[RMDB]
RNA sequence: GGGAACGACUCGAGUAGAGUCGAAAACAGAGCAGGUGGCCUGAAGAAUGGCUUCUCUGUUUACAACACACCCAAGAAGAAUCUGGGACCAUUGUAAUGAGGGGCACAAGCAGUUCCCUCUCUGUGAGUCCUACUUUAAGUUCGCUUAAAGUAGGACAAAAGAAACAACAACAACAAC
Reactivity to DMS in 0.01 (KOAc 150mM, MgCl2 10mM, bicine 150mM(pH8.5), 24C), signal-to-noise 4, nucleotides 027 to 126: c020a020g010a030g020c260a020g010g020u000g030g000c090c000u000g010a080a060g010a140a170u010g000g000c010u000u000c000u010c000u020g010u010u000u000a010c020a020a030c130a190c270a180c010c000c010a040a110g030a060a100g000a110a100u000c050u000g000g000g000a070c270c160a130u000u000g000u000a020a050u000g000a020g000g000g000g010c010a090c070a080a110g000c010a020g000u000u000c020c000c000u000c020u000c000u000g010u010g010a220
Reactivity to 2A3 in 0.01 (KOAc 150mM, MgCl2 10mM, bicine 150mM(pH8.5), 24C), signal-to-noise 4, nucleotides 027 to 126: c010a000g000a000g010c080a020g010g120u110g030g090c010c000u020g020a050a030g120a130a200u110g000g000c000u020u000c000u010c000u030g130u060u010u000a000c000a030a000c030a010c010a020c060c020c040a030a020g070a040a010g100a070a160u060c030u040g010g000g070a100c040c020a050u030u030g010u020a040a030u070g010a000g000g010g010g000c020a010c010a120a040g050c010a010g000u040u030c000c010c000u000c000u000c000u000g030u020g040a040